[RMDB]
RNA sequence: GGGAACGACUCGAGUAGAGUCGAAAAAGAAGAGCGAACACGUCUGAUUCAUUUGACUCUGUUUUAUCUGAUUCUUCUACGACACCUACCAUCUCCUCGUCUGUACAGGUAAAUUCUUUAGCUUUCAUCACCUCAUCCCUAAGCGCAAUUACUAAGAAUUACGGAGUGACUUCGGUCACUCCGUAAUAAAAGAAACAACAACAACAAC
Reactivity to 2A3 in 0.01 (KOAc 150mM, MgCl2 10mM, bicine 150mM(pH8.5), 24C), signal-to-noise 2, nucleotides 027 to 156: a010g030a000a010g030a000g000c000g050a030a000c000a020c040g090u110c100u080g060a150u160u140c080a080u150u100u080g030a010c000u020c040u040g100u070u080u070u030a100u000c030u060g050a140u080u000c000u010u000c010u030a020c050g040a020c020a020c000c000u040a030c000c030a030u100c020u040c050c020u050c040g040u000c030u100g000u020a030c020a000g080g000u070a020a090a040u130u070c040u010u090u060a050g020c060u000u120u220c010a050u060c000a050c020c000u070c020a100u130c000c000c000u060a070a020g060c070g000c070a000a120u140u100a050c000u070a100a030g130a060
Reactivity to DMS in 0.01 (KOAc 150mM, MgCl2 10mM, bicine 150mM(pH8.5), 24C), signal-to-noise 1, nucleotides 027 to 156: a080g000a140a020g010a080g020c130g000a020a070c070a050c060g000u040c070u050g020a170u010u000c040a170u010u000u010g000a080c000u000c010u020g040u000u000u000u000a080u000c070u010g040a170u010u000c060u000u030c040u000a160c100g010a140c010a070c020c010u000a040c020c000a080u000c010u030c000c030u000c020g000u000c020u000g050u010a080c130a100g000g030u000a010a010a070u000u000c040u000u000u000a060g000c030u000u000u000c040a050u010c020a110c010c000u010c030a120u000c010c040c010u010a090a100g000c100g040c030a110a130u000u010a020c040u000a070a100g010a070

Structure probing data (2A3 and DMS) for a 207-nucleotide construct.
DMS (dimethyl sulfate) methylates the pairing face of unpaired adenines and cytosines.
Reactivities are given for positions 27 through 156.